[RMDB]
RNA sequence: GGGAACGACUCGAGUAGAGUCGAAAAAUUGGACAUAUGCUGAAAAUUCCGCAGCGGAACAGAAUUAAUUAUAUCAGUGGUACUAGUAUCGAUAGACUCACACUGCGGUAUCAUUUUCAUCCGCAUCCACUAUCACGGUCUUCGGACCGUGAUAGUGAAAAGAAACAACAACAACAAC
Reactivity to DMS in 0.01 (KOAc 150mM, MgCl2 10mM, bicine 150mM(pH8.5), 24C), signal-to-noise 2, nucleotides 027 to 126: a140u020u000g000g020a040c080a080u010a040u040g010c050u000g000a040a070a020a140u020u000c040c000g010c040a030g010c060g080g000a060a030c170a110g000a070a150u020u020a040a080u020u020a070u020a090u020c040a080g020u000g010g010u040a130c110u000a070g020u010a080u000c170g020a100u040a060g000a120c070u030c090a110c040a150c000u010g000c070g000g020u010a020u020c180a050u050u030u000u000c080a070u030c080c030g010c040a000u010c220
Reactivity to 2A3 in 0.01 (KOAc 150mM, MgCl2 10mM, bicine 150mM(pH8.5), 24C), signal-to-noise 5, nucleotides 027 to 126: a000u110u070g030g040a020c040a040u210a030u160g050c060u090g060a070a030a050a080u100u030c030c030g010c000a030g000c020g010g020a090a040c060a090g090a060a030u180u160a080a060u160u150a190u050a050u120c020a030g050u040g080g010u040a120c030u080a050g140u040a150u160c060g050a050u020a120g100a110c010u030c050a090c000a010c040u020g010c030g010g010u020a010u050c070a020u050u020u000u040c030a020u030c010c000g000c020a020u060c040
This 177-nucleotide RNA was probed chemically with DMS and 2A3. 2A3 adducts were read by reverse transcription with SuperScript II with manganese. The reactions ran in a buffer of 150 mM KOAc, 10 mM MgCl2 and 150 mM bicine (pH 8.5), at 24 C. For DMS the reverse transcriptase was MarathonRT. For DMS, 2,774 sequencing reads were counted.